Structure probing data (DMS and 2A3) for a 177-nucleotide construct. For DMS, 2,486 sequencing reads were counted. The reactions ran in a buffer of 150 mM KOAc, 10 mM MgCl2 and 150 mM bicine (pH 8.5), at 24 C. The data come from the RNA Mapping Database (RMDB), library RFM100.

[RMDB]
RNA sequence: GGGAACGACUCGAGUAGAGUCGAAAAGUACAAAAGCCGCGUUAUUGAGCCCCGAAAAAUUCAUAUUGCAUGAGGCUUUCACUUUCGUGAUAGUGGGAGCGGUCGUAUACGCACGCCAGGCGAGUGCACCCCUGCUAAACUUCGGUUUAGCAGGGGUAAAAGAAACAACAACAACAAC
Reactivity to DMS in 0.01 (KOAc 150mM, MgCl2 10mM, bicine 150mM(pH8.5), 24C), signal-to-noise 2, nucleotides 027 to 126: g050u000a060c090a110a070a120a180g010c030c020g010c040g000u000u020a170u010u010g010a100g000c030c010c030c070g000a010a020a040a080a230u010u010c040a110u010a130u010u030g010c080a040u010g010a100g000g000c000u010u000u000c020a030c040u000u020u010c180g030u010g000a070u020a000g000u000g000g000g000a000g010c010g000g000u020c000g010u000a100u030a040c140g000c010a050c090g010c020c000a040g010g000c030g010a090g020u010g020c090
Reactivity to 2A3 in 0.01 (KOAc 150mM, MgCl2 10mM, bicine 150mM(pH8.5), 24C), signal-to-noise 2, nucleotides 027 to 126: g040u060a000c040a000a170a020a000g020c040c030g150c040g000u110u040a070u080u130g040a060g020c000c010c000c000g220a240a000a000a000a000u120u050c010a000u130a050u130u200g100c090a090u020g030a000g100g010c000u000u000u000c010a020c030u070u070u090c070g100u100g080a120u130a120g020u030g020g020g000a010g030c040g000g000u000c000g000u050a060u010a120c010g000c090a000c050g040c000c000a020g010g000c000g070a020g000u050g000c030